[RMDB]
This 207-nucleotide RNA was probed chemically with 2A3. Reactivities are rounded to 0.1 and cut off at 0 and 3. The reactions ran in a buffer of 150 mM KOAc, 10 mM MgCl2 and 150 mM bicine (pH 8.5), at 24 C. Reactivities are given for positions 27 through 156.
RNA sequence: GGGAACGACUCGAGUAGAGUCGAAAAGAUAUGGACGAUUACCUCCUUGGAUUUAUGUUCUUCCCUGGCAUCGGAAACGAUGCCAGCAGAACAUUGUCAGGAGGUGGGUCGUCCUAAGUCAAAGUGCACACGACACGUUCGCGUGUCGUGUGCACAAGAAUGCAGUACGGUUCGCCGUACUGCAUUCAAAAGAAACAACAACAACAAC
Reactivity to 2A3 in 0.01 (KOAc 150mM, MgCl2 10mM, bicine 150mM(pH8.5), 24C), signal-to-noise 1, nucleotides 027 to 156: g030a010u100a030u180g000g000a000c000g000a000u020u030a010c000c010u000c020c040u090u200g200g000a120u280u300u090a020u090g000u000u000c010u030u070c040c010c000u000g000g000c000a010u020c000g020g000a090a030a050c020g010a000u000g020c010c000a000g000c020a000g010a000a000c020a000u000u030g000u000c000a000g000g000a000g000g000u000g000g020g000u010c000g000u000c000c000u000a120a010g010u000c030a070a000a030g020u000g010c000a020c000a000c000g020a000c000a000c000g040u080u120c280g000c010g080u000g010u000c000g010u000g000u010g000c000a020c000a000a060